[RMDB]
RNA sequence: GGGAACGACUCGAGUAGAGUCGAAAAUCAUAAUUAUGAACAUUUGAGACUACCCCAUCCCAUAUCUUCGUACUUCAUUACUUAAUUUACGUAGGUAGAUUUAGUGCGGAAGGUAACGAACAGGGUACAGCGUGAGGCCGGUUAACGGAGCAACGAACCUAUGAAAUACGUUCGCGUAUUUCAUAGGAAAAGAAACAACAACAACAAC
Reactivity to DMS in 0.01 (KOAc 150mM, MgCl2 10mM, bicine 150mM(pH8.5), 24C), signal-to-noise 3, nucleotides 027 to 156: u000c030a100u000a100a130u000u000a110u010g000a110a140c070a130u000u000u010g010a150g010a120c060u000a050c010c010c010c030a150u010c030c010c040a290u010a030u000c010u010u000c010g030u000a040c020u000u010c060a060u000u000a050c040u000u000a020a050u000u000u000a070c080g040u010a070g030g020u000a010g010a050u000u000u000a010g030u000g000c060g010g010a000a020g010g010u000a070a080c050g010a040a040c060a120g030g010g010u000a020c040a040g000c070g000u000g010a080g000g000c010c000g030g000u000u000a080a140c050g010g010a070g030c020a050a070c060g000a080a190
Reactivity to 2A3 in 0.01 (KOAc 150mM, MgCl2 10mM, bicine 150mM(pH8.5), 24C), signal-to-noise 6, nucleotides 027 to 156: u040c020a010u070a260a090u230u240a130u210g080a080a050c060a140u090u100u150g100a090g020a040c050u060a060c050c010c020c010a060u050c010c010c020a050u050a050u090c050u030u000c000g010u010a010c000u010u020c010a050u010u090a010c000u040u040a050a050u080u050u030a050c090g090u090a060g270g010u000a020g050a110u010u000u020a000g000u010g030c070g070g030a020a010g040g010u050a080a050c030g020a030a010c040a090g050g000g020u050a050c030a020g070c050g020u020g030a020g060g000c010c010g000g000u050u030a140a020c050g010g010a020g020c010a010a020c020g020a000a060